[RMDB]
RNA sequence: GGGAACGACUCGAGUAGAGUCGAAAAGUACGACAACUUAUUACGCAUCGUCGUACGAUAGAUGCUAAGAUUAGUGGCGAAAGCCACAAGCACGGGUAUUCAUAAGUCAGAUCCGAGAGGAUUUGACGUCCUAGCCUGUGCAAGACUAGGUCAGACACACCAGUCAUAGCUUCGGCUAUGACUGGUGAAAAGAAACAACAACAACAAC
Reactivity to DMS in 0.01 (KOAc 150mM, MgCl2 10mM, bicine 150mM(pH8.5), 24C), signal-to-noise 1, nucleotides 027 to 156: g000u000a010c010g000a000c000a020a190c100u000u020a200u000u000a200c190g180c140a180u020c180g000u000c000g000u000a010c040g000a030u000a090g010a210u000g010c000u000a150a140g010a210u040u000a170g030u000g000g000c010g010a040a060a300g000c000c000a000c000a100a150g000c000a000c010g000g000g000u000a040u000u040c140a120u000a070a090g030u000c000a070g000a000u010c000c000g000a300g000a300g070g000a040u000u000u000g000a020c000g000u020c020c100u000a260g000c000c010u020g000u010g000c000a140a060g000a080c020u000a130g030g000u020c070a030g010a190c110a240
Reactivity to 2A3 in 0.01 (KOAc 150mM, MgCl2 10mM, bicine 150mM(pH8.5), 24C), signal-to-noise 2, nucleotides 027 to 156: g050u050a000c020g020a000c050a100a060c140u150u080a140u210u220a210c170g020c070a100u160c040g000u000c000g050u020a040c050g010a000u060a020g040a040u070g080c050u030a070a030g020a160u200u160a070g000u000g000g000c030g020a070a020a000g000c010c010a010c000a000a010g030c000a000c000g000g000g010u120a090u140u200c110a120u160a250a070g030u000c000a000g000a000u000c000c000g070a040g050a060g010g030a000u000u000u000g000a000c000g020u050c000c000u030a050g010c020c000u000g000u000g000c000a010a030g020a010c110u110a080g030g060u020c080a000g020a040c050a010